[RMDB]
RNA sequence: GGGAACGACUCGAGUAGAGUCGAAAAAUCAGAUCAGAUGAUGAAAUCAUUGCUUUCUUUGACCAGAUCAGAAAAGUAGAGUAUACCGAGAUGACAGAAAAAGAUAUGUUCAGCUUCGUGACAGUGGUCUACGCGUCUGAUUCGUCAGACGCGUAGAAAAAGAAACAACAACAACAAC
Reactivity to 2A3 in 0.01 (KOAc 150mM, MgCl2 10mM, bicine 150mM(pH8.5), 24C), signal-to-noise 2, nucleotides 027 to 126: a000u180c110a060g120a070u140c030a010g000a070u050g000a030u080g060a140a000a050u000c030a030u000u020g030c060u000u000u120c030u100u020u050g020a050c020c030a020g000a190u120c030a000g250a100a060a000a000g090u100a040g040a040g100u150a070u030a100c000c010g020a020g020a200u110g080a100c000a090g230a030a110a070a000a030g130a020u170a010u110g040u020u010c000a030g000c000u020u060c110g060u000g000a000c070a080g050u060g100g070
Reactivity to DMS in 0.01 (KOAc 150mM, MgCl2 10mM, bicine 150mM(pH8.5), 24C), signal-to-noise 2, nucleotides 027 to 126: a130u000c050a040g000a080u000c060a000g000a090u000g020a020u000g010a140a070a300u030c080a040u000u020g020c070u000u000u000c030u000u000u000g010a080c110c090a140g000a180u010c040a040g000a010a040a020a040g020u000a090g010a020g000u030a050u000a000c030c030g000a100g000a150u020g010a120c150a110g020a070a020a040a100a000g000a040u080a000u020g000u000u020c160a140g040c000u000u000c050g000u000g020a010c060a080g040u000g000g000